Structure probing data (2A3 and DMS) for a 177-nucleotide construct. For DMS, 1,324 sequencing reads were counted.
RNA sequence: GGGAACGACUCGAGUAGAGUCGAAAAGUAUGGGCGUUCGCGCCCAUACAAAACGUUCAUCCUACGGGACGGAAGUAGGAUUUAUGCUGAAGGAACGCUUCAAAACGGGCCGCUUCGGCGGCCCGAACCAUCAGCAUAAGUUCGCUUAUGCUGAUGGAAAAGAAACAACAACAACAAC
Reactivity to 2A3 in 0.01 (KOAc 150mM, MgCl2 10mM, bicine 150mM(pH8.5), 24C), signal-to-noise 2, nucleotides 027 to 126: g000u000a010u010g000g010g010c030g020u040u060c140g010c000g020c050c040c000a000u020a000c000a000a000a010a000c000g030u020u030c030a010u020c000c000u000a030c040g000g040g180a050c100g070g070a090a030g010u020a010g000g020a010u020u030u000a120u090g050c040u040g030a030a020g010g020a160a050c040g030c070u080u110c050a040a050a060a040c020g010g020g020c020c010g010c110u110u110c280g080g010c000g040g000c040c000c010g010a000a000
Reactivity to DMS in 0.01 (KOAc 150mM, MgCl2 10mM, bicine 150mM(pH8.5), 24C), signal-to-noise 2, nucleotides 027 to 126: g000u000a000u000g000g040g010c000g050u000u030c190g030c020g020c000c000c020a010u010a000c020a030a020a080a110c050g010u000u000c000a110u010c010c000u020a030c040g010g000g000a090c160g030g000a070a110g040u000a030g000g000a060u000u010u000a050u040g010c130u020g010a030a080g000g020a080a090c090g010c100u010u000c130a040a060a070a160c050g010g070g100c000c020g040c070u000u010c110g040g050c020g050g110c020c000c000g040a020a040
Reactivities are given for positions 27 through 126.